[RMDB]
RNA sequence: GGGAACGACUCGAGUAGAGUCGAAAAGCGCGUCGGGGUCGAUGCGGGUUUGUGCCAACCCCGUUUUCAGGGCGGCAACGAUGGCGCGUGCGGAUUGGAAUGCAUCUUUGCCGCUGCGGAGUACGACAUACGAGGUCAUCUUCGGAUGACCUCGUAUAAAAGAAACAACAACAACAAC
Reactivity to 2A3 in 0.01 (KOAc 150mM, MgCl2 10mM, bicine 150mM(pH8.5), 24C), signal-to-noise 2, nucleotides 027 to 126: g120c140g030c000g000u010c000g010g000g080g040u000c080g000a000u060g040c050g020g000g030u070u180u060g170u040g000c030c000a050a050c000c000c000c000g090u090u000u000u240c050a020g000g030g100c010g000g040c000a000a000c030g000a030u030g170g000c080g000c020g020u160g000c030g080g070a170u100u240g150g080a170a190u300g080c080a000u000c000u000u000u010g000c000c000g000c030u020g050c020g000g080a070g070u060a000c000g020a000c050

Structure probing data (2A3) for a 177-nucleotide construct. The RNA was probed in 150 mM KOAc, 10 mM MgCl2 and 150 mM bicine (pH 8.5) at 24 C.